Chemical mapping of a 207-nucleotide RNA with 2A3.

RNA sequence: GGGAACGACUCGAGUAGAGUCGAAAAAAGUGAUCCUCCUACCCUGUCCUCCCAAAGUGCUGGGUUUACAGGCUACCACACAGCUGAGAUUAUCAUUUGAAUCCAUGAGGAAGACUGCCUGAAAAAGUAAAUUGUGGAUGGGGAGGGAAGGGGAAGAUACUUUUAGCGUGUUCGCACGCUAAAAGUAAAAAGAAACAACAACAACAAC
Reactivity to 2A3 in 0.01 (KOAc 150mM, MgCl2 10mM, bicine 150mM(pH8.5), 24C), signal-to-noise 1, nucleotides 027 to 156: a000a000g130u190g020a080u080c000c000u020c000c030u030a090c010c010c010u110g300u140c040c000u010c000c060c060a050a000a030g030u040g040c030u010g060g000g050u000u010u060a030c000a010g000g020c000u040a050c000c000a020c020a010c070a140g030c050u060g020a020g020a170u020u130a040u140c030a050u070u160u300g040a050a010u060c010c020a050u100g000a020g110g030a050a090g050a000c080u080g010c000c000u010g040a050a020a020a020a020g050u060a050a060a070u120u040g020u300g010g010a070u090g040g010g030g000a110g030g000g060a060a080g000g010g000g000a030a000g000a050
Source: RMDB library OK3TST, as collected in RNAgym. For 2A3, 507 sequencing reads were counted. The RNA was probed in 150 mM KOAc, 10 mM MgCl2 and 150 mM bicine (pH 8.5) at 24 C. For 2A3 the reverse transcriptase was SuperScript II with manganese. Values cover nucleotides 27 to 156.